[RMDB]
RNA sequence: GGGAACGACUCGAGUAGAGUCGAAAAGGCUCCCACUUCGGUGGGAGCCAAAGCUGAACGCGCAGCAAGCGUUAAACAUGGAAAAACGCACGUCCAAUGCGCAAAGCUUCCCCUUCGGGGGAAGCAACCACAUUCAUUGGUUCGCCAAUGAAUGUGGAAAAGAAACAACAACAACAAC
Reactivity to DMS in 0.01 (KOAc 150mM, MgCl2 10mM, bicine 150mM(pH8.5), 24C), signal-to-noise 1, nucleotides 027 to 126: g000g000c000u000c000c000c000a030c000u010u000c210g050g020u010g000g000g010a010g010c000c010a000a010a050g000c100u000g000a070a190c100g040c050g030c020a030g010c070a100a140g000c000g000u000u010a040a190a090c080a100u020g030g000a050a100a010a040a040c020g010c000a080c090g010u000c010c030a100a100u000g000c030g020c070a090a040a150g000c000u000u000c000c000c000c000u010u000c150g010g000g020g020g000a010a000g040c010a010a020
Reactivity to 2A3 in 0.01 (KOAc 150mM, MgCl2 10mM, bicine 150mM(pH8.5), 24C), signal-to-noise 2, nucleotides 027 to 126: g000g010c000u000c000c030c010a000c020u040u060c250g080g010u000g020g000g020a010g000c000c010a000a000a000g010c010u010g060a060a010c060g000c000g000c020a010g040c030a100a050g000c010g010u040u070a090a300a010c090a200u300g100g090a070a060a050a000a030c000g000c010a020c050g070u030c030c030a060a050u120g010c020g000c000a000a000a100g000c000u010u020c010c000c000c000u010u040c200g060g000g000g000g000a000a000g010c000a000a020